Structure probing data (DMS and 2A3) for a 177-nucleotide construct. Values cover nucleotides 27 to 126. DMS adducts were read by reverse transcription with MarathonRT.
RNA sequence: GGGAACGACUCGAGUAGAGUCGAAAAUGACUGUGUUUGCCUCUGCACCUCCACGGGGGCCAGCUGGAGCAGACUCAAAGCCCGGACUCCGUGACAUGGGAACUGGGAGCCCAGCUGGGUUGGGUGGUCCACACUUGAAUUUCGAUUCAAGUGUGGAAAAAGAAACAACAACAACAAC
Reactivity to DMS in 0.01 (KOAc 150mM, MgCl2 10mM, bicine 150mM(pH8.5), 24C), signal-to-noise 4, nucleotides 027 to 126: u010g010a100c080u000g020u000g010u000u010u010g020c040c000u020c030u000g010c080a110c030c030u010c060c050a110c100g030g000g000g010g030c010c000a010g000c010u000g010g000a130g030c040a100g000a180c100u010c070a070a100a150g020c020c010c020g010g000a120c180u000c050c110g010u010g010a090c120a150u010g000g000g010a070a120c140u000g000g000g010a150g020c020c000c000a020g000c030u000g010g000g010u010u000g010g010g020u000g010g000
Reactivity to 2A3 in 0.01 (KOAc 150mM, MgCl2 10mM, bicine 150mM(pH8.5), 24C), signal-to-noise 2, nucleotides 027 to 126: u100g040a030c030u050g020u010g030u100u070u110g050c000c000u000c020u030g040c030a050c010c020u020c040c000a040c080g040g000g000g030g000c010c020a010g000c000u020g020g010a290g010c030a030g080a250c050u000c070a100a090a060g060c020c000c000g020g010a060c050u050c100c130g150u160g110a030c060a100u110g000g000g010a010a060c050u020g050g000g010a020g000c010c000c000a000g000c000u010g000g000g060u120u060g050g020g030u060g000g030